Overview: The data come from the RNA Mapping Database (RMDB), library OK1LIB. The record gives the reactivity of an RNA of 177 nucleotides to 2A3 and DMS. The reactions ran in a buffer of 150 mM KOAc, 10 mM MgCl2 and 150 mM bicine (pH 8.5), at 24 C. Values are in units of 0.01, from 0 to 300, in steps of 10. For 2A3 the reverse transcriptase was SuperScript II with manganese. For 2A3, 10,029 sequencing reads were counted. For DMS, 25,281 sequencing reads were counted.
[RMDB]
RNA sequence: GGGAACGACUCGAGUAGAGUCGAAAAUUGUGGCACUUGAAAUGAAAGGAUUUUCAGUGGGUGGUCUGUAUCUUCUCUUCUGAAACAAUUCUUUCUGGAUAUUUGUCAUUGGGUUAGAAGAUGUAGCCAUAAAUAUUAGUUUCGACUAAUAUUUAUGAAAAGAAACAACAACAACAAC
Reactivity to 2A3 in 0.01 (KOAc 150mM, MgCl2 10mM, bicine 150mM(pH8.5), 24C), signal-to-noise 8, nucleotides 027 to 126: u180u150g020u020g020g000c000a000c010u030u030g020a020a060a040u080g010a050a000a000g030g010a020u010u010u010u010c000a000g010u020g020g010g010u020g010g040u040c160u230g230u210a180u080c010u090u020c060u010c000u270u020c000u010g010a020a030a020c060a060a050u010u000c000u000u030u000c030u020g020g010a020u020a030u150u040u040g010u000c010a020u040u130g100g000g020u110u120a060g050a140a040g020a140u120g040u130a020g030c010
Reactivity to DMS in 0.01 (KOAc 150mM, MgCl2 10mM, bicine 150mM(pH8.5), 24C), signal-to-noise 8, nucleotides 027 to 126: u020u030g020u000g010g010c010a020c130u010u000g000a220a130a070u020g000a020a040a030g010g010a020u010u010u000u000c010a000g010u000g000g010g020u010g000g000u010c170u050g010u020a060u030c010u010u000c000u030c010u010u010c010u000g010a010a040a050c180a040a020u010u010c000u000u000u010c030u010g000g010a300u020a010u000u010u000g010u010c020a030u000u010g010g000g000u000u010a060g010a080a130g010a090u010g000u020a050g000c150